Structure probing data (DMS) for a 177-nucleotide construct. It was measured as part of the RMDB library M2PK50. For DMS, 926 sequencing reads were counted.
[RMDB]
RNA sequence: GGGAACGACUCGAGUAGAGUCGAAAAUAGCUGACGUUCGCGUCAGCUAAAAGCACCAAAACCUCCUGGCGGAGCGGCGCCGGCCCCGCCGGGAAGGCCGCCAACUCGAUGGGUUCGCCCAUCGAAAUAUCUAGGAGCAGUUCGCUGCUCCUAGAUAAAAAGAAACAACAACAACAAC
Reactivity to DMS in 0.01 (KOAc 150mM, MgCl2 10mM, bicine 150mM(pH8.5), 24C), signal-to-noise 1, nucleotides 027 to 126: u000a010g020c000u020g020a000c000g010u000u010c220g010c010g020u010c010a010g000c000u000a000a030a100a080g000c110a180c020c010a100a070a040a270c010c000u000c010c000u000g020g000c000g000g000a030g000c010g020g010c140g010c140c100g040g010c010c000c060c000g030c000c010g000g000g000a030a020g000g000c050c060g010c070c080a080a080c110u000c000g000a010u020g020g010g030u000u010c250g010c000c010c000a000u000c010g010a010a110a100